Background:
Structure probing data (2A3 and DMS) for a 177-nucleotide construct. It was measured as part of the RMDB libraries RFM100 and RFMREP. Conditions: 150 mM KOAc, 10 mM MgCl2 and 150 mM bicine (pH 8.5), 24 C. DMS adducts were read by reverse transcription with MarathonRT. The 2A3 profile rests on 912 reads.
RNA sequence: GGGAACGACUCGAGUAGAGUCGAAAAAAUAAACAUGCAAAGUUGUCGCCAAGAAUUGAUGAUAGAACCGUAAUGCUCAACGGGUAACCGAAUUGAGCCAGUCCAAGACUCGCAAGGUUGAGGGUUGUUCUGCAUACUCAUUCGUGAGUAUGCAGAAAAAAGAAACAACAACAACAAC
Reactivity to 2A3 in 0.01 (KOAc 150mM, MgCl2 10mM, bicine 150mM(pH8.5), 24C), signal-to-noise 2, nucleotides 027 to 126: a000a000u290a030a120a040c090a030u260g030c020a060a050a000g060u030u040g040u080c050g000c090c030a090a010g110a080a180u140u050g000a040u080g000a020u080a050g050a020a020c000c030g060u100a050a050u080g000c000u000c000a000a020c020g000g050g000u050a010a050c000c050g050a090a130u010u040g000a000g000c000c000a000g000u000c000c000a060a000g000a020c000u000c040g020c020a000a090g080g000u000u000g000a040g000g070g000u000u020g000
Reactivity to DMS in 0.01 (KOAc 150mM, MgCl2 10mM, bicine 150mM(pH8.5), 24C), signal-to-noise 3, nucleotides 027 to 126: a050a070u050a070a050a050c080a060u020g000c100a040a030a150g000u000u030g000u000c020g030c000c040a040a060g000a070a110u000u000g000a040u010g000a060u030a040g000a090a080c040c030g000u010a030a110u020g010c010u000c000a030a010c030g000g010g000u050a110a050c020c040g000a120a110u000u000g000a020g010c050c040a050g000u000c030c010a020a170g030a030c010u000c040g000c210a090a210g000g000u020u000g000a260g000g000g020u000u000g040